This 207-nucleotide RNA was probed chemically with 2A3 and DMS. Values cover nucleotides 27 to 156. The DMS profile rests on 6,492 reads. DMS adducts were read by reverse transcription with MarathonRT.
RNA sequence: GGGAACGACUCGAGUAGAGUCGAAAAACAACAGAUAGCUGGAACCAGCGUAGAAUUCUACGCAUAUCCAUAGCGAAUGGUACCUGUAAAGAAAAUAAGAAUGGAUGUACAAGUACCAACAGCCGUUUAUGCCAUGGUGAUGUCAAUCACAUAUGCAUGCUUUUAAUGAUUUCGAUCAUUAAAAGCAAAAAGAAACAACAACAACAAC
Reactivity to 2A3 in 0.01 (KOAc 150mM, MgCl2 10mM, bicine 150mM(pH8.5), 24C), signal-to-noise 6, nucleotides 027 to 156: a000c030a010a000c020a010g110a140u140a050g020c020u030g030g000a080a090c080c050a060g000c000g000u000a010g050a160a260u300u090c000u000a000c010g000c010a020u030a020u060c020c010a040u070a050g010c010g040a070a050u040g010g000u000a000c010c000u010g000u030a000a060a090g100a040a120a040a070u230a070a020g130a080a070u130g030g050a030u070g010u010a000c000a020a010g000u000a010c000c000a020a040c030a040g060c010c030g010u030u100u080a040u050g030c050c040a030u060g020g040u010g010a020u020g120u210c070a070a040u010c010a020c030a070u080a010u070g020c020a020
Reactivity to DMS in 0.01 (KOAc 150mM, MgCl2 10mM, bicine 150mM(pH8.5), 24C), signal-to-noise 4, nucleotides 027 to 156: a080c030a080a100c050a090g020a080u000a080g010c050u000g010g010a100a120c160c050a120g010c010g030u000a050g010a260a150u010u000c020u010a020c030g010c020a140u000a100u010c070c040a080u000a030g020c030g010a170a180u000g010g010u000a010c020c010u010g020u000a020a030a100g000a160a050a080a140u000a120a120g000a140a110u000g020g010a210u000g000u010a020c030a010a040g000u010a010c020c020a040a090c070a090g010c010c020g010u000u000u000a060u000g010c010c060a060u000g000g020u000g040a100u000g020u000c150a090a110u000c020a040c020a050u000a090u000g000c060a160